The record gives the reactivity of an RNA of 177 nucleotides to DMS and 2A3. The RNA was probed in 150 mM KOAc, 10 mM MgCl2 and 150 mM bicine (pH 8.5) at 24 C. Values cover nucleotides 27 to 126. The DMS profile rests on 1,614 reads.
RNA sequence: GGGAACGACUCGAGUAGAGUCGAAAAGGAAAUAGGUAUGCGGUCGCUAUUAAAAUAUUGCGACAAACUGGCACACAGCAAGCGAGUGGUGACGAGUGCACAGAAGUCGUUCCCAGCCAGAAAAAAAACCACAUAGAUGAUUCGUCAUCUAUGUGGUAAAAGAAACAACAACAACAAC
Reactivity to DMS in 0.01 (KOAc 150mM, MgCl2 10mM, bicine 150mM(pH8.5), 24C), signal-to-noise 2, nucleotides 027 to 126: g020g020a050a090a090u000a040g010g000u000a040u000g030c100g030g020u000c010g020c020u000a050u000u000a060a050a110a110u020a030u000u000g010c010g000a020c000a010a080a080c050u000g000g010c030a090c090a110c070a090g030c070a060a060g010c070g020a090g010u000g010g010u010g000a100c030g000a070g000u000g050c070a090c050a030g000a120a020g000u010c000g020u010u000c000c000c000a080g010c150c130a130g010a000a000a000a070a010a040a100
Reactivity to 2A3 in 0.01 (KOAc 150mM, MgCl2 10mM, bicine 150mM(pH8.5), 24C), signal-to-noise 2, nucleotides 027 to 126: g070g010a020a110a090u130a100g030g050u110a010u140g080c070g040g000u000c000g000c000u040a020u060u090a060a080a090a080u270a050u080u160g020c000g000a000c000a030a020a000c060u010g050g040c010a000c000a010c010a060g070c030a090a000g020c010g080a070g060u050g020g020u030g030a020c020g030a030g080u100g040c020a010c010a090g150a160a000g010u000c010g000u000u010c000c020c000a000g000c000c010a010g060a100a020a020a000a010a000a000